[RMDB]
RNA sequence: GGGAACGACUCGAGUAGAGUCGAAAAACGAUGGUUUCGACCAUCGUAAAAAACCUUUGUGCAAAGGGAGCUCGAAAGCUGAGGCCCAUUGGGCUACCCACCAGCUGAGAGCGAAGAACUUUGCACUCUGGUAAAAACACCAACUUCGGUUGGUGAACUCUGUGUCUUACUUCGGUAAGACACAGAGAAAAGAAACAACAACAACAAC
Reactivity to DMS in 0.01 (KOAc 150mM, MgCl2 10mM, bicine 150mM(pH8.5), 24C), signal-to-noise 2, nucleotides 027 to 156: a010c000g000a020u000g010g000u020u010u010c290g020a050c020c000a000u000c000g040u000a000a040a070a120a020a010c000c000u000u000u000g030u000g030c040a030a030a020g000g000g010a280g070c010u020c020g000a150a040a010g000c010u000g000a080g010g030c020c000c020a300u000u000g030g020g000c000u000a020c020c020c040a300c100c010a080g000c020u000g000a300g000a000g000c000g000a080a110g010a090a080c020u000u000u000g020c000a020c000u000c030u000g000g010u000a020a020a070a200a170c000a030c010c010a030a020c020u010u010c280g090g010u000u000g000g050u000g000a020a120
Reactivity to 2A3 in 0.01 (KOAc 150mM, MgCl2 10mM, bicine 150mM(pH8.5), 24C), signal-to-noise 2, nucleotides 027 to 156: a000c010g000a010u020g000g030u050u130u200c180g050a020c000c000a000u000c000g000u040a070a040a000a010a100a130c010c000u000u000u000g000u010g000c010a010a010a020g010g000g010a010g000c000u010c010g060a150a060a000g020c000u000g000a010g000g000c010c010c130a230u140u300g000g000g000c020u090a200c000c030c030a040c000c000a000g000c000u020g010a020g000a000g060c010g010a010a000g000a000a000c010u020u000u010g000c000a000c000u000c010u010g000g000u090a150a070a050a010a020c020a000c040c000a000a000c000u080u070c230g100g000u000u000g020g020u040g000a020a010
The record gives the reactivity of an RNA of 207 nucleotides to DMS and 2A3. 2A3 is a SHAPE reagent: it acylates the 2'-hydroxyl of flexible nucleotides of all four kinds. Values cover nucleotides 27 to 156. 2A3 adducts were read by reverse transcription with SuperScript II with manganese. DMS adducts were read by reverse transcription with MarathonRT. The 2A3 profile rests on 1,876 reads.